RNA sequence: GGGAACGACUCGAGUAGAGUCGAAAAAAAGAUAUGGACGUGCUAUUCUUUCAACAGCUGAACGUAACAUCCCAUCGGAAACGAUGGGUGGUUCAGACAUGAAAUUAGAGCACGUCCUAAGUCAAAACCAGUUACAAAUGUUCGCAUUUGUAACUGGAAAAGAAACAACAACAACAAC
Reactivity to 2A3 in 0.01 (KOAc 150mM, MgCl2 10mM, bicine 150mM(pH8.5), 24C), signal-to-noise 1, nucleotides 027 to 126: a010a010a000g050a000u090a060u180g000g000a000c000g010u010g010c010u000a020u040u040c010u040u010u000c090a150a140c030a100g080c030u000g020a010a000c030g020u070a090a000c050a300u250c000c010c050a000u000c020g060g000a100a050a040c020g000a000u020g000g000g000u000g000g000u030u010c010a000g050a010c030a050u040g010a010a060a010u040u030a050g000a000g000c010a000c020g000u020c000c000u000a000a000g000u000c020a000a000a050a140
Reactivity to DMS in 0.01 (KOAc 150mM, MgCl2 10mM, bicine 150mM(pH8.5), 24C), signal-to-noise 1, nucleotides 027 to 126: a050a110a090g000a040u000a300u000g000g000a010c000g020u000g010c000u000a070u000u000c020u000u010u010c010a070a080c210a200g010c010u000g000a010a010c010g010u000a040a100c190a050u010c000c000c000a010u000c010g040g040a170a100a130c000g020a010u010g000g010g010u000g000g000u010u010c020a020g000a010c090a160u000g010a000a000a010u010u000a000g010a000g000c000a000c010g020u000c000c010u000a010a050g030u020c030a070a110a210a120